Chemical mapping of a 177-nucleotide RNA with 2A3 and DMS. The RNA was probed in 150 mM KOAc, 10 mM MgCl2 and 150 mM bicine (pH 8.5) at 24 C. It was measured as part of the RMDB library TTRDEL.

[RMDB]
RNA sequence: GGGAACGACUCGAGUAGAGUCGAAAAGAUAUGGAGUGAGAGCAACAGCUACCGGUCGGAAACGACCGAGUAGACAUGCUCGAGCUCCUAAGUCAAAGGAUCUAGACUGUUCGCAGUCUAGAUCCAAGUCUAUAGUUUCCUUCGGGAAACUAUAGACAAAAGAAACAACAACAACAAC
Reactivity to 2A3 in 0.01 (KOAc 150mM, MgCl2 10mM, bicine 150mM(pH8.5), 24C), signal-to-noise 3, nucleotides 027 to 126: g030a010u040a020u090g000g000a000g010u060g010a060g010a010g010c050a040a260c080a300g050c020u000a000c010c020g000g000u000c000g000g010a090a020a010c010g000a010c010c010g020a010g000u000a000g020a050c020a090u080g000c010u000c010g010a000g010c000u000c000c000u000a010a000g010u000c030a000a080a250g000g000a000u000c010u010a010g010a000c000u000g060u100u100c300g000c160a000g000u000c000u000a000g000a000u000c000c010a000a000
Reactivity to DMS in 0.01 (KOAc 150mM, MgCl2 10mM, bicine 150mM(pH8.5), 24C), signal-to-noise 3, nucleotides 027 to 126: g000a020u000a260u000g000g000a020g020u010g010a300g000a030g030c010a060a160c230a100g000c000u000a000c000c000g000g000u010c000g010g010a060a050a090c000g020a010c010c000g000a080g010u000a000g020a120c110a120u010g000c000u000c000g010a300g000c020u000c010c000u000a010a070g000u010c020a090a070a200g000g000a010u000c000u000a010g000a020c000u000g020u000u010c180g020c000a010g010u000c000u000a000g000a000u000c000c000a020a050